[RMDB]
RNA sequence: GGGAACGACUCGAGUAGAGUCGAAAAAAUUAAGUGAAUUAAAAUAAAGAUGAAGAUCAAGAACAAGAUACAAACGGCAAGUAUCGUUCGAUCCAUGAAAUAAAUAAUAUCACAAAGCCGAAUAUAAGUAGGUAAUAUUGUUCGCAAUAUUACCUACAAAAGAAACAACAACAACAAC
Reactivity to 2A3 in 0.01 (KOAc 150mM, MgCl2 10mM, bicine 150mM(pH8.5), 24C), signal-to-noise 1, nucleotides 027 to 126: a000a010u140u130a110a000g000u040g000a000a090u090u020a040a120a020a210u030a040a010a000g010a010u010g080a160a040g000a010u010c010a070a080g000a010a020c060a120a050g000a000u000a030c020a030a230a020c040g160g000c010a000a070g000u000a000u000c000g000u000u030c010g010a000u050c000c000a020u050g070a070a030a010u040a010a000a020u060a020a010u110a160u010c000a000c000a050a070a030g110c060c060g020a090a000u240a000u010a020a050
Reactivity to DMS in 0.01 (KOAc 150mM, MgCl2 10mM, bicine 150mM(pH8.5), 24C), signal-to-noise 1, nucleotides 027 to 126: a100a100u020u010a050a100g000u010g000a000a040u000u020a000a100a060a040u000a090a120a100g010a030u000g010a110a080g000a010u020c020a100a150g020a010a010c070a090a210g020a000u000a000c020a020a110a060c110g000g030c060a030a210g010u000a000u000c020g030u000u000c020g030a010u000c040c000a010u000g010a060a000a050u010a060a090a110u020a010a030u000a100u020c000a030c000a030a090a210g000c020c040g000a090a190u020a100u010a060a070
Chemical mapping of a 177-nucleotide RNA with 2A3 and DMS. The reactions ran in a buffer of 150 mM KOAc, 10 mM MgCl2 and 150 mM bicine (pH 8.5), at 24 C. The 2A3 profile rests on 947 reads. For 2A3 the reverse transcriptase was SuperScript II with manganese. In probing experiments dimethyl sulfate is read out at A N1 and C N3, which are open when not base-paired. Reactivities are given for positions 27 through 126.